[RMDB]
Record summary
Conditions: 150 mM KOAc, 10 mM MgCl2 and 150 mM bicine (pH 8.5), 24 C. The record gives the reactivity of an RNA of 170 nucleotides to 2A3 and DMS. Reactivities are given for positions 27 through 129. For 2A3, 19,536 sequencing reads were counted.
RNA sequence: GGGAACGACUCGAGUAGAGUCGAAAAGAGGUCCCCCAGGAAUGGCGGGACCCCACUCUACAGGGUCCGCGUUCCAUCCUUUCUUACCUGAUGGCCGGCAUGGUCCCAGCCUCCUCGCUGGCGCCGGAAAGCCGGAAGUUCGCUUCCGGCAAAAGAAACAACAACAACAAC
Reactivity to 2A3 in 0.01 (KOAc 150mM, MgCl2 10mM, bicine 150mM(pH8.5), 24C), signal-to-noise 8, nucleotides 027 to 129: g170a070g010g010u010c000c000c000c000c000a000g090g150a150a160u040g060g020c110g060g000g010a020c000c000c000c000a050c000u020c010u030a020c020a020g010g010g000u050c040c070g070c050g050u030u010c000c000a060u100c020c010u080u120u090c020u070u100a150c020c020u120g080a100u130g150g000c000c010g000g000c020a080u160g110g010u090c000c010c010a020g010c000c020u080c010c000u070c020g020c010u020g000g000c040g010c020c010g010g020a070a020a000
Reactivity to DMS in 0.01 (KOAc 150mM, MgCl2 10mM, bicine 150mM(pH8.5), 24C), signal-to-noise 5, nucleotides 027 to 129: g090a110g070g010u010c040c000c020c000c030a030g010g000a190a120u000g040g000c270g020g040g000a040c030c000c030c000a040c050u050c030u030a050c050a000g000g010g010u030c050c150g090c110g010u050u000c040c040a110u050c110c070u080u130u110c010u030u040a110c000c000u060g040a140u070g040g040c000c030g050g030c040a140u050g060g000u060c170c000c010a110g030c010c060u080c060c050u040c130g050c010u030g060g000c180g020c010c060g020g050a030a040a070